[RMDB]
RNA sequence: GGGAACGACUCGAGUAGAGUCGAAAAGAUAUGGAUCCUGGAUGUUCAACAGCUCGGAAACGAGACAUGAAUGCAUCCAGGGAUCCUAAGUCAAACUUCCCGAGGAGGUUCGCCUCCUCGGGAAGAACAAGAAUGCUUGGUUCGCCAAGCAUUCUUGAAAAGAAACAACAACAACAAC
Reactivity to 2A3 in 0.01 (KOAc 150mM, MgCl2 10mM, bicine 150mM(pH8.5), 24C), signal-to-noise 1, nucleotides 027 to 126: g040a000u040a040u180g020g000a010u000c010c000u020g000g000a000u020g000u120u070c090a130a110c020a150g000c010u010c020g030g080a110a030a000c000g010a010g080a090c070a110u150g050a100a080u180g050c010a000u000c010c010a050g010g040g000a000u000c000c010u010a120a030g070u030c090a120a000a170c010u020u000c000c000c020g000a020g000g040a000g000g030u140u230c300g130c020c000u010c030c000u000c020g000g060g000a000a000g000a000a000
Reactivity to DMS in 0.01 (KOAc 150mM, MgCl2 10mM, bicine 150mM(pH8.5), 24C), signal-to-noise 2, nucleotides 027 to 126: g030a040u010a300u010g000g000a010u000c000c000u000g000g000a020u000g020u000u020c090a110a170c160a100g000c000u000c000g010g010a120a060a190c010g010a010g000a070c110a120u000g000a200a100u010g030c010a020u000c010c000a030g000g000g000a000u000c000c000u000a060a120g020u000c040a060a130a180c010u000u000c000c000c010g000a040g000g030a020g000g020u000u020c260g000c000c000u000c000c000u000c000g000g010g000a000a000g000a030a160
Overview
Chemical mapping of a 177-nucleotide RNA with 2A3 and DMS. The reactions ran in a buffer of 150 mM KOAc, 10 mM MgCl2 and 150 mM bicine (pH 8.5), at 24 C. Reactivities are given for positions 27 through 126. 2A3 adducts were read by reverse transcription with SuperScript II with manganese. Source: RMDB library TTRDEL, as collected in RNAgym. For DMS the reverse transcriptase was MarathonRT. The DMS profile rests on 1,663 reads.